[RMDB]
RNA sequence: GGGAACGACUCGAGUAGAGUCGAAAAGUAUGGAUGGCACCGUGACGGCUCAAUCACACAAGUGCCAACGAUAACGAGGCGCUCGCUAUUGCUGCGUAACUGACGGCCUGACGGUCUGACGUUACAAAAAACGAAAAGUGGUUCGCCACUUUUCGAACUGUAAUGAAUACUUCGGUAUUCAUUACAGAAAAGAAACAACAACAACAAC
Reactivity to DMS in 0.01 (KOAc 150mM, MgCl2 10mM, bicine 150mM(pH8.5), 24C), signal-to-noise 3, nucleotides 027 to 156: g050u000a070u000g120g020a160u000g010g030c000a050c010c040g020u000g000a060c060g020g000c130u000c090a110a090u000c010a110c030a090c060a110a090g050u000g010c020c000a030a080c020g010a090u000a110a140c070g010a060g020g000c040g030c030u000c000g020c000u000a070u000u000g010c010u000g010c040g000u000a020a030c000u010g000a300c300g000g000c000c020u010g000a160c250g030g030u010c010u010g000a300c300g000u010u000a030c010a020a010a050a050a050a130c000g000a030a010a010a000g010u000g020g000u000u000c300g020c010c000a020c010u000u010u020u000c000g000a020a060
Reactivity to 2A3 in 0.01 (KOAc 150mM, MgCl2 10mM, bicine 150mM(pH8.5), 24C), signal-to-noise 7, nucleotides 027 to 156: g090u060a050u150g110g070a060u040g020g000c010a000c020c030g020u010g020a050c060g080g030c050u050c140a050a090u070c000a010c000a000c010a100a070g010u010g000c000c000a020a020c020g020a040u070a110a030c050g010a040g080g030c040g000c060u040c030g020c060u090a070u130u230g030c070u090g000c040g010u010a010a010c010u020g030a010c020g000g020c010c010u130g110a080c160g000g000u000c010u010g010a010c010g010u000u000a000c010a010a020a010a010a000a010c010g000a000a000a000a000g000u010g020g030u030u040c120g030c090c000a000c000u010u000u000u010c000g010a040a020